[RMDB]
RNA sequence: GGGAACGACUCGAGUAGAGUCGAAAAGAAUUGGUAUGUAAGCUACACCUUCCGGUAGCUGCGUCACACUUUAAGAGUGUGCAUACUGAGCCGAAGCUCAGCUUCGGUCCCCCAAGGGAAGUUCAAAAGUAUGCCAGGGAUUCGUCCCUGGCAUACUAAAAGAAACAACAACAACAAC
Reactivity to 2A3 in 0.01 (KOAc 150mM, MgCl2 10mM, bicine 150mM(pH8.5), 24C), signal-to-noise 3, nucleotides 027 to 126: g130a020a080u030u050g010g000u000a000u000g020u000a000a000g000c000u000a000c010a070c010c010u000u000c000c000g000g010u000a000g000c010u000g010c020g010u000c000a000c000a000c000u020u080u300a300a150g220a000g300u000g010u000g000c020a000u000a000c010u030g020a010g000c010c000g000a000a000g000c010u090c300a040g000c000u000u000c000g000g000u010c020c000c000c000c020a020a030g030g030g030a000a010g000u100u080c060a030a080a000
Reactivity to DMS in 0.01 (KOAc 150mM, MgCl2 10mM, bicine 150mM(pH8.5), 24C), signal-to-noise 2, nucleotides 027 to 126: g000a120a100u000u000g000g010u000a000u000g000u000a300a250g000c020u000a000c000a040c140c020u000u000c010c000g000g000u000a000g000c000u000g010c030g000u000c000a030c030a000c000u020u020u000a070a100g000a020g010u000g000u020g030c000a000u000a000c000u000g010a000g010c020c000g070a000a020g040c030u080c290a070g000c000u000u000c000g030g030u000c030c020c000c190c250a180a050g020g000g000a000a010g010u090u000c150a040a080a200